[RMDB]
RNA sequence: GGGAACGACUCGAGUAGAGUCGAAAAUGUGGUGAUUGGGAUGGCAAUUGUAGUCAGGAAAUAAACGUGCCAAAUUUUGACGGUACGUGAGCAUAUGCCCAAGAUACAACCUUUCAUGUGCAGCAGAAUGAGUAGCUCUCUUCGGAGAGCUACUCAUAAAAGAAACAACAACAACAAC
Reactivity to DMS in 0.01 (KOAc 150mM, MgCl2 10mM, bicine 150mM(pH8.5), 24C), signal-to-noise 2, nucleotides 027 to 126: u050g010u030g000g010u010g000a050u030u020g000g000g000a080u020g000g050c050a080a090u010u010g000u100a130g030u020c060a050g030g050a080a210a160u020a060a130a010c020g010u000g000c040c000a160a120a160u030u020u060u020g010a120c190g000g000u000a010c000g000u000g000a030g000c130a070u000a040u000g000c090c030c060a120a050g000a110u050a120c080a110a070c120c030u000u000u000c020a020u040g080u020g010c040a110g010c150a130g020a010
Reactivity to 2A3 in 0.01 (KOAc 150mM, MgCl2 10mM, bicine 150mM(pH8.5), 24C), signal-to-noise 1, nucleotides 027 to 126: u250g050u020g100g030u060g030a100u040u000g050g010g030a040u060g040g000c040a050a190u010u040g060u040a010g070u030c040a000g210g050a000a100a000u150a000a060a000c000g000u000g010c050c020a090a060a070u160u260u000u300g110a020c060g000g000u020a000c000g060u020g000a010g020c000a040u060a020u210g010c000c000c000a040a000g040a000u120a120c020a110a140c000c050u150u040u000c000a010u000g010u060g000c060a040g000c000a010g060a160